RNA sequence: GGGAACGACUCGAGUAGAGUCGAAAAAGACGGAAACCCAUCGACUGUCACCAGAUGCUGCAUCACCUGAUCACUGAUGGCUCAACGGUAUCCGGCGGUACAACUGAAUACUUAUAGCUGCCUUUUGAAAAGGAGUUCAUCUUCGGAUGAACUCCAAUCCAAUUCAGAUCUUCGGAUCUGAAUUGGAAAAAGAAACAACAACAACAAC
Reactivity to 2A3 in 0.01 (KOAc 150mM, MgCl2 10mM, bicine 150mM(pH8.5), 24C), signal-to-noise 2, nucleotides 027 to 156: a000g070a020c040g030g010a050a060a060c020c000c020a050u060c070g100a100c030u060g050u010c010a000c000c040a010g040a090u070g040c050u020g020c010a030u030c020a020c010c020u050g040a050u050c030a020c080u040g010a020u030g060g050c020u040c080a060a090c030g050g000u010a060u060c030c040g010g000c020g040g010u090a050c050a090a040c090u110g030a040a060u070a090c040u110u120a080u070a170g030c020u030g020c020c010u100u080u090u180g120a080a080a050a070g000g000a010g010u000u000c000a000u010c000u040u080c170g080g000a000u010g000a010a000c000u000c000c000a000a000
Structure probing data (2A3) for a 207-nucleotide construct. The reactions ran in a buffer of 150 mM KOAc, 10 mM MgCl2 and 150 mM bicine (pH 8.5), at 24 C. The 2A3 profile rests on 1,372 reads. 2A3 adducts were read by reverse transcription with SuperScript II with manganese.